[RMDB]
RNA sequence: GGGAACGACUCGAGUAGAGUCGAAAACGCUGAGACCGGUAGUGGUCGUCCGAGUACACGACGUGUCGUUGACGGGAUACAGGUUAAUUUCCACAUCGAUAUAGUUAAACGUAUUUCUGGGUACGGGUUCGCAUUUAUCUGCGGAAGAGACGGUGUGCGAAGCACAUGAGUUCGCUCAUGUGCUUCGAAAAGAAACAACAACAACAAC
Reactivity to 2A3 in 0.01 (KOAc 150mM, MgCl2 10mM, bicine 150mM(pH8.5), 24C), signal-to-noise 4, nucleotides 027 to 156: c050g020c040u050g050a020g020a070c020c020g060g010u110a040g060u090g060g030u030c010g010u000c010c050g070a040g040u090a020c040a010c080g070a010c030g120u090g020u060c010g030u040u050g040a070c060g010g000g020a020u030a100c030a030g020g080u060u090a110a060u080u060u020c000c010a020c030a010u040c010g070a030u030a020u040a180g100u100u130a110a120a050c030g020u030a040u010u120u020c070u090g050g010g010u010a010c000g040g010g000u030u050c000g000c010a010u050u110u120a080u080c050u030g000c000g040g020a050a010g010a010g020a070c020g000g030u030g000u020g020
Reactivity to DMS in 0.01 (KOAc 150mM, MgCl2 10mM, bicine 150mM(pH8.5), 24C), signal-to-noise 4, nucleotides 027 to 156: c040g030c010u010g000a180g010a050c040c010g020g060u010a090g020u000g020g010u000c030g020u000c010c030g000a170g040u000a070c060a130c080g010a050c020g040u010g040u000c030g000u000u000g010a100c080g020g000g010a130u000a120c080a120g030g050u000u000a070a140u000u000u010c020c010a060c020a040u000c040g010a060u010a060u000a140g030u000u000a050a120a080c050g010u000a050u000u000u010c110u020g020g010g020u000a020c030g000g000g030u000u000c040g020c040a110u000u000u010a070u030c130u000g020c020g000g000a040a110g000a190g010a080c050g000g020u000g040u000g010